[RMDB]
RNA sequence: GGGAACGACUCGAGUAGAGUCGAAAAAGUGGGUUUCAAGGGAUUGGCCUAUUUCAUCUAAGUUGCCAAACUUAUGUGCACAGAGUUGUUCGCAGUAUUUCCCUAGCAUCUUCUUAAUGUGUGUGGGCAUGUCCGGGGAUUUCGAUCCCCGGACAUGAAAAGAAACAACAACAACAAC
Reactivity to DMS in 0.01 (KOAc 150mM, MgCl2 10mM, bicine 150mM(pH8.5), 24C), signal-to-noise 1, nucleotides 027 to 126: a070g040u030g000g000g030u000u000u010c050a050a060g010g000g030a220u000u000g000g000c010c060u010a080u000u000u010c040a060u000c080u000a030a060g000u000u000g050c140c180a080a080a080c100u010u000a030u000g030u000g030c100a030c130a110g010a110g000u000u000g020u000u000c090g030c060a110g010u020a110u000u000u000c020c000c000u000a150g050c070a060u010c140u000u010c080u000u000a070a070u010g030u000g000u020g010u010g000g010g000
Source: RMDB library OK2TRN, as collected in RNAgym. Structure probing data (DMS) for a 177-nucleotide construct. For DMS the reverse transcriptase was MarathonRT. The DMS profile rests on 1,057 reads. Reactivities are given for positions 27 through 126.